[RMDB]
RNA sequence: GGGAACGACUCGAGUAGAGUCGAAAACGUCUACAGUUCGCUGUAGACGAAAGGCGCGGCACGGUCCGCGGAACAAACGGGCCCAUACAAAAAUUAAAAUAAAAAGAUGAUGGUUCGCCAUCAUCAACCUAUGACUAUACUUCGGUAUAGUCAUAGGAAAAGAAACAACAACAACAAC
Reactivity to DMS in 0.01 (KOAc 150mM, MgCl2 10mM, bicine 150mM(pH8.5), 24C), signal-to-noise 2, nucleotides 027 to 126: c000g000u000c000u010a000c010a000g000u000u000c190g030c000u010g000u010a010g000a030c000g000a020a070a170g000g000c030g020c050g000g000c030a180c170g010g000u000c000c020g000c000g000g000a070a100c120a040a130a170c080g000g000g000c010c000c040a060u050a170c050a040a040a090a070a050u010u020a050a050a040a050u020a050a050a100a160a140g000a000u010g000a000u000g000g020u010u010c210g020c020c000a000u000c000a000u000c000a030a060
Reactivity to 2A3 in 0.01 (KOAc 150mM, MgCl2 10mM, bicine 150mM(pH8.5), 24C), signal-to-noise 4, nucleotides 027 to 126: c010g000u000c010u000a010c010a020g020u010u060c120g070c090u020g000u000a000g020a000c000g010a010a000a000g020g030c000g020c000g020g020c040a050c300g140g060u080c000c000g010c000g000g040a060a040c040a000a130a020c040g080g050g000c000c050c020a050u160a090c040a040a220a080a060a040u220u300a210a110a110a100u290a070a080a020a030a020g000a010u010g000a000u010g000g090u040u090c200g030c070c000a000u000c000a000u010c000a000a000